[RMDB]
RNA sequence: GGGAACGACUCGAGUAGAGUCGAAAAAGAUCGAUUACGAUCGAUCAAUGAUUCCCCUCACCCACCUCUGAAGAUCCCAGGUGGGCGAGGGAACGGAGCACGGGAUCACGAGCAGUACGCUGCUCGAAAAAGAACUAGACCUUCGGGUCUAGUUCAACUUAUCCCAUGGCUUCGGCCAUGGGAUAAGAAAAGAAACAACAACAACAAC
Reactivity to 2A3 in 0.01 (KOAc 150mM, MgCl2 10mM, bicine 150mM(pH8.5), 24C), signal-to-noise 1, nucleotides 027 to 156: a000g020a000u000c000g000a000u010u020a010c230g090a050u000c010g000a000u030c010a030a040u160g100a060u040u060c010c000c020c070u010c010a010c000c000c000a020c000c020u120c050u110g090a080a040g000a070u010c000c000c000a000g000g040u010g010g000g060c010g000a030g030g010g000a050a120c140g080g050a090g050c130a110c120g000g000g000a000u020c010a010c040g000a000g000c000a010g000u020a030c300g040c080u000g000c000u000c000g020a000a000a010a000a000g000a010a000c000u000a000g000a000c010c010u030u100c280g100g000g000u000c000u000a000g000u000u000c000a000a000